[RMDB]
RNA sequence: GGGAACGACUCGAGUAGAGUCGAAAAGAAGGGUGAAAGCCCUUGAUACUGUAGUGGAAAUUAUAAAUAAGAAGAGUUCUGAGUUGCUUAAGCAGAACUAAAAUAAAACGACAAGCAUUAUUACAAACAUGGCGAGGUAAGUUCGCUUACCUCGCAAGUAGGCAUAUUAGUUCGCUAAUAUGCCUACAAAAGAAACAACAACAACAAC
Reactivity to DMS in 0.01 (KOAc 150mM, MgCl2 10mM, bicine 150mM(pH8.5), 24C), signal-to-noise 1, nucleotides 027 to 156: g030a050a070g040g080g050u020g000a130a120a300g040c020c000c060u010u000g030a110u000a080c030u010g000u000a110g040u000g020g010a110a070a060u000u020a000u030a050a080a150u000a050a170g000a140a240g010a180g000u000u000c030u010g000a160g030u000u000g000c030u000u010a050a170g020c030a000g010a000a090c030u010a030a040a030a080u030a020a060a100a140c040g010a040c050a020a040g040c030a030u000u000a060u000u000a100c110a000a030a050c010a070u010g020g020c020g000a010g020g030u000a010a010g000u000u000c300g040c020u000u000a000c020c000u020c000g020c010a020a030
Reactivity to 2A3 in 0.01 (KOAc 150mM, MgCl2 10mM, bicine 150mM(pH8.5), 24C), signal-to-noise 2, nucleotides 027 to 156: g030a000a000g010g020g000u040g020a060a000a000g010c000c020c000u000u010g010a010u030a100c100u070g100u160a040g010u060g030g040a030a070a070u100u110a040u120a170a140a020u130a060a020g070a060a030g010a020g060u010u000c000u030g050a080g080u140u100g160c050u050u090a070a040g000c000a010g010a000a000c040u020a020a000a030a070u070a000a110a020a020c050g070a020c040a040a010g000c000a000u000u060a010u050u160a160c130a080a080a000c050a080u120g050g000c000g000a000g000g000u000a000a000g000u000u020c060g000c060u000u000a000c000c000u000c000g000c000a000a000